[RMDB]
RNA sequence: GGGAACGACUCGAGUAGAGUCGAAAAGAGCUCUAGAUGCGAUUGUAGACUGUUACAGCAUCUGCUAUCAGUCUGAGAUAGCUCAGGAUAGCUGGAGCUAUCUGCAACGCUGCAGACUCCAGUGACAGCGUGAACAAUCGUUCAUGUCACAGAGCAGCCCAAAAUAUUACUUCGGUAAUAUUUUGGGAAAAGAAACAACAACAACAAC
Reactivity to 2A3 in 0.01 (KOAc 150mM, MgCl2 10mM, bicine 150mM(pH8.5), 24C), signal-to-noise 8, nucleotides 027 to 156: g020a010g000c010u010c010u020a040g010a070u050g020c010g020a030u000u010g020u020a030g020a100c010u010g030u070u100a070c040a060g040c030a160u130c130u190g000c010u030a050u090c020a030g100u020c040u050g020a010g000a040u030a010g020c000u010c030a030g080g040a220u160a160g110c050u080g090g010a000g000c010u020a030u000c000u020g040c020a030a050c060g040c090u030g000c000a010g030a180c020u040c050c040a020g020u000g040a030c010a000g020c010g060u050g060a060a020c010a010a030u020c010g020u070u050c050a080u120g060u060c010a030c040a090g000a000g000c010a010g000
Reactivity to DMS in 0.01 (KOAc 150mM, MgCl2 10mM, bicine 150mM(pH8.5), 24C), signal-to-noise 3, nucleotides 027 to 156: g010a160g020c020u000c030u000a070g010a110u000g000c000g020a070u000u000g010u000a060g000a030c010u000g010u010u000a090c070a060g010c040a190u000c080u000g010c020u000a050u000c020a110g000u000c090u010g000a140g010a050u010a030g030c010u000c010a130g020g010a120u000a130g000c040u010g020g010a060g020c040u000a030u000c010u000g000c040a080a070c110g010c120u000g010c010a070g000a160c010u000c030c050a140g010u000g010a040c020a050g000c030g040u000g000a100a060c020a060a060u000c070g010u000u010c040a060u000g020u000c040a100c080a070g010a030g020c010a040g000